An RNA of 177 nucleotides, treated with DMS and 2A3 and read out base by base.

RNA sequence: GGGAACGACUCGAGUAGAGUCGAAAAGUUUCACCAUGUUGGUCAGUCUGGUCUCAAACUCCUGACCUCAGGUGAUUCACCGGUCUUGGCUUUCCAAAGUGCUGGGACUACAGGCGUGAGCCACCACCUAUUGCCCACAUUUCGAUGUGGGCAAUAGAAAAGAAACAACAACAACAAC
Reactivity to DMS in 0.01 (KOAc 150mM, MgCl2 10mM, bicine 150mM(pH8.5), 24C), signal-to-noise 2, nucleotides 027 to 126: g000u000u000u000c010a040c000c010a100u000g040u000u000g000g020u000c010a040g010u010c080u000g000g030u010c160u010c290a110a100a130c010u010c110c010u000g020a010c010c030u010c050a020g010g020u000g000a020u000u000c010a060c090c080g000g010u000c070u000u010g000g010c040u010u020u010c100c100a100a110a110g020u010g000c020u000g000g000g010a060c030u010a060c160a050g020g000c020g000u010g010a110g030c000c020a150c100c040a130c140
Reactivity to 2A3 in 0.01 (KOAc 150mM, MgCl2 10mM, bicine 150mM(pH8.5), 24C), signal-to-noise 2, nucleotides 027 to 126: g010u000u010u010c010a020c000c060a090u050g040u130u040g160g030u000c000a020g030u030c180u250g060g010u070c040u030c170a160a180a030c010u000c030c000u020g000a010c000c020u000c000a000g000g010u010g020a010u010u000c030a030c060c080g000g010u010c020u060u030g000g000c010u070u140u090c100c050a160a050a140g140u090g050c000u040g030g000g000a030c000u050a070c120a090g010g000c020g040u070g030a040g040c000c010a040c000c010a060c040
The RNA was probed in 150 mM KOAc, 10 mM MgCl2 and 150 mM bicine (pH 8.5) at 24 C. For DMS, 1,852 sequencing reads were counted. For DMS the reverse transcriptase was MarathonRT. 2A3 adducts were read by reverse transcription with SuperScript II with manganese. Values are in units of 0.01, from 0 to 300, in steps of 10.